Notes:
Source: RMDB library TTRDEL, as collected in RNAgym. Chemical mapping of a 177-nucleotide RNA with 2A3 and DMS. For 2A3, 1,719 sequencing reads were counted. The DMS profile rests on 1,078 reads. Values cover nucleotides 27 to 126. The reactions ran in a buffer of 150 mM KOAc, 10 mM MgCl2 and 150 mM bicine (pH 8.5), at 24 C.
RNA sequence: GGGAACGACUCGAGUAGAGUCGAAAAGAUAUGGACUCCCCACCUCAUGAACUACUUCGUAACACUCGGAAACGAGUGGAGAAGAAGCAUGAGAGGUCCUAAGUCAAAACGGGGGUUCGCCCCCGAAGCCAAGUUAUAUCUUCGGAUAUAACUUGGCAAAAGAAACAACAACAACAAC
Reactivity to 2A3 in 0.01 (KOAc 150mM, MgCl2 10mM, bicine 150mM(pH8.5), 24C), signal-to-noise 2, nucleotides 027 to 126: g000a000u140a100u200g000g030a030c020u230c050c030c010c040a020c000c000u010c010a030u040g000a120a080c030u250a040c000u240u000c000g030u030a090a040c000a010c000u000c000g000g050a060a080a070c010g030a000g000u020g000g020a060g000a010a000g000a000a000g000c020a020u000g020a010g030a010g060g010u000c000c010u080a200a060g140u100c060a030a000a040a110c040g020g010g030g010g070u080u120c140g100c050c070c260c000c000g020a010a000
Reactivity to DMS in 0.01 (KOAc 150mM, MgCl2 10mM, bicine 150mM(pH8.5), 24C), signal-to-noise 2, nucleotides 027 to 126: g010a070u010a290u000g000g010a000c010u000c110c000c000c020a300c080c000u020c000a020u000g000a150a090c110u030a150c010u000u000c010g000u010a230a300c010a010c000u000c000g010g000a080a120a180c000g010a000g000u000g000g000a100g000a050a100g020a160a010g040c000a010u000g010a020g010a130g010g010u000c010c010u000a060a120g000u000c030a060a040a140a200c030g000g040g010g010g010u000u010c170g000c000c000c030c000c000g000a020a080